[RMDB]
RNA sequence: GGGAACGACUCGAGUAGAGUCGAAAACCUGUUGAAGAUAUUGCGCAGGUUGUCAUAGCUGACACCUUACAGGAAACUCCUGUUGUGCCUGAUACUGUUGAAGUCCCACCGCAAGUGGUGAAACUUCCGAUACCAAGGUGUUCGCACCUUGGUAUCGAAAAGAAACAACAACAACAAC
Reactivity to DMS in 0.01 (KOAc 150mM, MgCl2 10mM, bicine 150mM(pH8.5), 24C), signal-to-noise 1, nucleotides 027 to 126: c010c010u010g000u010u010g000a090a110g000a080u010a110u000u010g010c110g050c100a050g020g010u000u010g000u000c020a050u010a210g010c260u000g030a010c030a050c010c020u010u030a050c010a030g030g000a080a070a190c200u000c010c000u010g000u000u000g020u010g010c010c040u000g050a020u000a060c020u000g000u010u010g000a000a040g010u000c050c030c010a030c030c070g000c290a170a250g010u000g010g000u020g000a020a040a010c010u000u000c040
An RNA of 177 nucleotides, treated with DMS and read out base by base.
For DMS the reverse transcriptase was MarathonRT.